[RMDB]
RNA sequence: GGGAACGACUCGAGUAGAGUCGAAAACUCCAUUGCUUCGGCAAUGGAGAAACAGGACGUGAGACCGAAACGGAGGUAGGUCCAACUACCUUCUCACAAAAUAAACGCUUAGGUUCGCCUAAGCGAAGUGGGAAGAGAAGUUCGCUUCUCUUCCCACAAAAGAAACAACAACAACAAC
Reactivity to 2A3 in 0.01 (KOAc 150mM, MgCl2 10mM, bicine 150mM(pH8.5), 24C), signal-to-noise 2, nucleotides 027 to 126: c000u000c010c000a000u010u010g000c030u040u030c230g170g000c000a000a000u000g010g000a000g020a000a010a000c060a030g040g070a030c070g000u050g020a030g050a050c040c040g120a170a160a030c200g110g040a030g000g010u010a000g010g050u060c060c020a110a080c020u010a010c000c000u030u000c010u030c010a060c040a010a130a000a010u230a040a110a020c010g020c000u010u000a030g030g000u050u010c190g070c020c000u000a010a000g000c000g000a010a020
Reactivity to DMS in 0.01 (KOAc 150mM, MgCl2 10mM, bicine 150mM(pH8.5), 24C), signal-to-noise 1, nucleotides 027 to 126: c020u030c000c000a000u000u000g030c000u000u020c300g060g050c060a000a000u000g040g000a010g000a030a100a050c110a120g030g040a020c140g020u000g010a030g010a200c050c010g010a120a050a120c120g040g000a020g000g020u000a030g020g020u000c200c180a100a190c000u000a020c000c000u000u000c000u000c000a030c050a040a060a040a130u000a030a080a130c010g010c000u000u000a000g000g010u000u000c300g010c000c000u000a000a000g000c000g000a000a030
This 177-nucleotide RNA was probed chemically with 2A3 and DMS. DMS adducts were read by reverse transcription with MarathonRT. Reactivities are rounded to 0.1 and cut off at 0 and 3. It was measured as part of the RMDB library M2PK50. Values cover nucleotides 27 to 126.